Conditions: 150 mM KOAc, 10 mM MgCl2 and 150 mM bicine (pH 8.5), 24 C. Structure probing data (DMS and 2A3) for a 177-nucleotide construct. The 2A3 profile rests on 1,830 reads. Values cover nucleotides 27 to 126.
RNA sequence: GGGAACGACUCGAGUAGAGUCGAAAAGUGUGAUUGUUCGCAAUCACACAAAGAUGGAAAGCCACCAUGAAGGCUAACCAUCAAAAUUCAUGCAAACAAAAAAAAGAUUUGGCUUCGGCCAAAUCAAGUAUCUAACCUACUUCGGUAGGUUAGAUACAAAAGAAACAACAACAACAAC
Reactivity to DMS in 0.01 (KOAc 150mM, MgCl2 10mM, bicine 150mM(pH8.5), 24C), signal-to-noise 1, nucleotides 027 to 126: g000u010g010u000g000a020u010u010g010u030u020c250g010c020a030a000u000c010a010c000a010c000a040a060a070g010a010u000g000g020a070a300a020g010c000c000a110c060c130a180u000g010a160a080g000g000c000u000a020a300c010c010a010u000c000a060a090a110a170u000u010c110a030u020g020c180a100a110a110c110a020a010a000a050a040a060a180a150g010a000u000u000u000g010g000c000u000u000c260g020g030c000c000a000a000a000u000c000a030a030
Reactivity to 2A3 in 0.01 (KOAc 150mM, MgCl2 10mM, bicine 150mM(pH8.5), 24C), signal-to-noise 2, nucleotides 027 to 126: g000u000g000u010g010a020u010u020g020u020u040c060g010c170a010a010u020c000a000c000a000c010a010a020a000g000a000u000g000g000a020a020a020g000c010c020a020c090c100a190u190g180a230a070g010g000c020u010a010a020c000c000a000u020c020a050a070a000a010u070u040c040a020u220g130c080a030a130a140c090a110a070a100a050a050a000a000a100g010a000u010u000u000g000g000c000u030u070c230g110g000c000c000a000a000a000u000c000a000a000